[RMDB]
RNA sequence: GGGAACGACUCGAGUAGAGUCGAAAACAGAUCAAUGUUGCUAGGGUAGAUGAGGCUAGAAAAACAGGGAUUCAACCUGGGAGAGCCUGAUGCUGCACCUUCCACUCUGGUGUCCUUGAGGGGCCUCCUAACCGUCUAAAUUCGUUUAGACGGUUAGAAAAGAAACAACAACAACAAC
Reactivity to 2A3 in 0.01 (KOAc 150mM, MgCl2 10mM, bicine 150mM(pH8.5), 24C), signal-to-noise 4, nucleotides 027 to 126: c020a010g060a090u140c060a080a150u140g050u090u080g090c040u040a030g000g030g060u040a040g020a110u060g050a020g030g000c020u060a060g170a150a130a020a010a000c020a010g060g010g010a020u150u180c040a060a080c010c010u020g010g040g010a120g010a000g010c010c020u040g020a060u120g010c040u020g010c020a150c020c010u040u020c000c010a030c030u040c050u050g000g050u050g020u020c020c000u040u020g050a060g010g040g010g010c020c020u020c000
Reactivity to DMS in 0.01 (KOAc 150mM, MgCl2 10mM, bicine 150mM(pH8.5), 24C), signal-to-noise 7, nucleotides 027 to 126: c070a090g010a110u010c110a070a070u000g010u000u000g010c040u010a070g020g010g010u000a040g000a070u010g000a060g000g020c010u000a100g010a080a070a050a140a170c020a020g000g000g010a170u010u010c230a090a150c030c020u000g010g000g010a120g010a100g000c010c020u000g000a070u010g000c040u000g010c020a090c060c020u000u000c040c030a040c070u000c050u010g000g000u000g000u000c020c030u000u010g000a120g010g000g000g000c070c020u000c050
An RNA of 177 nucleotides, treated with 2A3 and DMS and read out base by base. DMS adducts were read by reverse transcription with MarathonRT. Values are in units of 0.01, from 0 to 300, in steps of 10. The reactions ran in a buffer of 150 mM KOAc, 10 mM MgCl2 and 150 mM bicine (pH 8.5), at 24 C. Source: RMDB library OK2TST, as collected in RNAgym.